[RMDB]
RNA sequence: GGGAACGACUCGAGUAGAGUCGAAAAGAGACGCUCCUCACAUCCCAGACGGGGCGGCAGGGCAGAGGCGCUCCCCACAUCUCAGACGAUGGGCGGCCUGGUAGAGACGCUCCUCACUUCCUAGAUGGGAUGGCGGCCGGGCAGAGACGCUCCUCACACUUAUCAGUGACUUCGGUCACUGAUAAGUAAAAGAAACAACAACAACAAC
Reactivity to 2A3 in 0.01 (KOAc 150mM, MgCl2 10mM, bicine 150mM(pH8.5), 24C), signal-to-noise 1, nucleotides 027 to 156: g050a000g000a010c070g000c040u010c000c010u010c000a060c020a120u100c050c000c000a000g040a060c080g000g000g000g010c000g040g000c060a080g040g030g000c070a050g000a020g090g070c030g010c010u040c000c010c030c000a060c030a060u030c020u060c070a060g010a140c130g030a100u030g000g010g000c040g050g010c000c030u160g050g000u180a070g030a000g030a170c030g030c000u030c020c020u080c000a040c060u220u180c000c000u070a080g010a140u050g000g040g000a000u010g070g000c030g010g030c020c000g000g000g000c060a020g010a000g000a080c080g010c010u050c000c000u020c000a030c000
An RNA of 207 nucleotides, treated with 2A3 and read out base by base. The 2A3 profile rests on 873 reads. High 2A3 reactivity points to a flexible backbone, as in loops and unpaired stretches. Reactivities are given for positions 27 through 156.